[RMDB]
RNA sequence: GGGAACGACUCGAGUAGAGUCGAAAAGGAGGGAAGGCUGGAGUUUCACCAGAGAAGGCUGCUCAGCCGAUUUCGCAUUUCAACGCUUUCACGGCGAGCAGCGAAAGCGAAAGCGGAGCCUCCGAAAACGGUCAUAUUAGUUCGCUAAUAUGACCGUAAAAGAAACAACAACAACAAC
Reactivity to DMS in 0.01 (KOAc 150mM, MgCl2 10mM, bicine 150mM(pH8.5), 24C), signal-to-noise 8, nucleotides 027 to 126: g010g020a020g000g000g010a130a190g010g010c000u000g000g000a270g010u010u000u020c070a240c100c080a060g010a080g010a090a080g010g000c010u000g000c020u010c020a080g050c000c010g000a120u000u000u010c120g010c020a140u020u050u040c230a090a180c190g000c020u010u010u030c160a130c010g000g020c040g000a020g010c020a020g000c070g010a020a060a060g000c010g000a180a090a060g000c030g000g010a300g000c000c000u010c000c000g010a040a040a060
Reactivity to 2A3 in 0.01 (KOAc 150mM, MgCl2 10mM, bicine 150mM(pH8.5), 24C), signal-to-noise 6, nucleotides 027 to 126: g000g010a010g010g010g050a110a040g110g000c010u030g030g030a050g020u020u070u060c100a120c070c030a020g030a010g040a180a030g170g000c010u010g000c010u010c020a080g000c000c010g000a000u010u040u040c030g000c020a080u040u210u230c100a100a040c060g000c010u030u090u100c150a050c060g020g000c010g010a010g020c010a010g000c010g000a030a000a000g020c000g020a040a010a000g000c000g020g030a060g100c000c010u000c000c010g010a020a000a000

This 177-nucleotide RNA was probed chemically with DMS and 2A3.
DMS adducts were read by reverse transcription with MarathonRT.
The RNA was probed in 150 mM KOAc, 10 mM MgCl2 and 150 mM bicine (pH 8.5) at 24 C.
It was measured as part of the RMDB library OK1LIB.